Chemical mapping of a 177-nucleotide RNA with DMS. DMS adducts were read by reverse transcription with MarathonRT.

[RMDB]
RNA sequence: GGGAACGACUCGAGUAGAGUCGAAAAUGGUAGAUGCCUGUAAUCCCAGCUACUUGGGACGCUGAGGCAGGAUAAUUGUUUGAACCCGGGAGGUGGAGGUUGCAAUGAGUUGAGAUCGCACCAUUGCGUUACUCCCGACCUUCGGGUCGGGAGUAACAAAAGAAACAACAACAACAAC
Reactivity to DMS in 0.01 (KOAc 150mM, MgCl2 10mM, bicine 150mM(pH8.5), 24C), signal-to-noise 1, nucleotides 027 to 126: u000g000g040u000a180g040a160u000g000c000c010u010g000u000a130a140u020c010c010c000a070g040c190u000a100c230u040u000g020g000g000a060c170g030c220u000g000a030g000g030c030a010g000g010a130u020a080a050u010u000g000u000u000u000g000a100a060c040c000c020g000g010g000a030g050g000u010g000g020a080g010g010u000u030g000c040a030a020u000g000a140g010u000u000g060a180g000a070u010c160g010c030a060c000c000a020u010u000g000c120
Reactivities are given for positions 27 through 126. The reactions ran in a buffer of 150 mM KOAc, 10 mM MgCl2 and 150 mM bicine (pH 8.5), at 24 C.